This 177-nucleotide RNA was probed chemically with DMS and 2A3. For 2A3 the reverse transcriptase was SuperScript II with manganese. For 2A3, 337 sequencing reads were counted. Reactivities are given for positions 27 through 126. For DMS, 943 sequencing reads were counted.

RNA sequence: GGGAACGACUCGAGUAGAGUCGAAAAUUAUAGACGUAGUAUACGCAGAAGGAUUGGGAGCUAAUAGAAAUGAACUAUUAGUACGUGGUUCUGAAGAAAAUGAAGACUACAUAUGCUUGGCUGACAGACGGUACUCGUGGUUCGCCACGAGUACCGUAAAAGAAACAACAACAACAAC
Reactivity to DMS in 0.01 (KOAc 150mM, MgCl2 10mM, bicine 150mM(pH8.5), 24C), signal-to-noise 1, nucleotides 027 to 126: u080u110a010u030a010g010a030c060g000u090a000g010u000a030u000a160c070g000c030a000g040a110a100g000g000a000u000u000g010g010g000a300g000c040u060a070a000u000a000g000a210a020a160u000g000a090a200c000u000a000u000u000a090g000u000a030c120g000u010g000g000u000u020c030u000g010a230a130g050a100a010a000a070u000g000a110a220g000a090c020u000a020c040a040u000a110u000g000c070u010u000g020g010c060u000g040a030c290a040g050
Reactivity to 2A3 in 0.01 (KOAc 150mM, MgCl2 10mM, bicine 150mM(pH8.5), 24C), signal-to-noise 1, nucleotides 027 to 126: u140u070a200u030a090g110a000c070g000u000a010g120u000a270u020a140c070g000c000a000g000a090a000g100g160a000u230u240g010g000g000a000g000c000u000a000a000u000a000g000a000a100a100u240g000a000a000c140u000a000u000u000a000g000u210a000c000g150u000g000g030u000u100c000u000g030a060a030g000a000a230a050a000u000g000a140a000g020a090c070u000a000c100a030u300a000u070g000c040u050u000g070g000c300u120g030a020c100a100g230